[RMDB]
Notes: This 207-nucleotide RNA was probed chemically with 2A3. The RNA was probed in 150 mM KOAc, 10 mM MgCl2 and 150 mM bicine (pH 8.5) at 24 C.

RNA sequence: GGGAACGACUCGAGUAGAGUCGAAAAGUGAACGAUCUCGGUUGUUUCUAUGAAGGCAUGAUCACCCCGUCCGAUGCGGAAGUUCGUGCUUCCGUCGAACGCGAAAGUCGGACGGCGGCCAUGAGUCAAUAUGUUUAAGGCUUCGGCCUUAAACAAACUCCCAGGGAAUAUUCGUAUUCCCUGGGAGAAAAGAAACAACAACAACAAC
Reactivity to 2A3 in 0.01 (KOAc 150mM, MgCl2 10mM, bicine 150mM(pH8.5), 24C), signal-to-noise 1, nucleotides 027 to 156: g170u120g060a120a030c050g030a140u040c080u020c100g030g000u000u000g000u030u000u010c030u030a110u100g050a090a040g080g010c000a000u000g000a010u070c060a020c000c000c000c000g000u000c000c000g000a010u040g000c010g010g010a010a010g060u140u300c160g160u300g050c000u010u000c000c000g010u030c020g110a080a030c130g030c010g160a080a030a000g030u020c000g000g000a000c000g000g000c040g000g000c010c010a030u030g020a000g000u060c000a090a090u060a060u260g030u000u000u000a000a000g000g000c000u030u030c170g070g000c000c000u000u000a000a000a000c000a000a010a000
For 2A3 the reverse transcriptase was SuperScript II with manganese.
2A3 is a SHAPE reagent: it acylates the 2'-hydroxyl of flexible nucleotides of all four kinds.